[RMDB]
RNA sequence: GGGAACGACUCGAGUAGAGUCGAAAAAUACUCUCGUGUUAUUUCCAGGAUGGGCUUUAAACUCGAUGCAACAGUUCCUGGAUAUCCUAAGCUUUUCAUUACUCGUGAAGAGGCUGUAAGGCAAGUUGACGGACAUCCUUCGGGAUGUCCAAAAGAAACAACAACAACAAC
Reactivity to DMS in 0.01 (KOAc 150mM, MgCl2 10mM, bicine 150mM(pH8.5), 24C), signal-to-noise 2, nucleotides 027 to 129: a140u060a120c140u030c080u020c100g030u010g050u050u000a100u020u030u020c030c000a080g000g000a050u030g030g010g100c060u000u030u160a110a070a190c110u000c050g000a030u020g000c090a130a020c110a110g060u000u000c030c000u070g000g000a010u000a110u010c080c030u070a060a130g010c000u000u010u000u110c020a020u000u000a300c070u010c120g020u000g080a030a090g000a040g050g060c100u000g040u050a150a050g000g020c160a030a150g000u000u000g000a130c200
Reactivity to 2A3 in 0.01 (KOAc 150mM, MgCl2 10mM, bicine 150mM(pH8.5), 24C), signal-to-noise 3, nucleotides 027 to 129: a000u160a000c010u050c000u000c060g000u010g040u090u080a210u010u040u000c000c010a060g000g080a070u080g010g000g000c000u130u090u080a000a010a150c010u050c090g000a010u130g000c020a120a070c010a220g010u000u000c010c000u070g020g000a070u000a050u040c000c000u020a030a000g010c020u000u000u010u020c000a000u000u210a230c080u040c060g000u030g090a100a030g020a060g060g000c010u030g040u100a050a000g040g040c050a040a030g030u030u000g060a050c050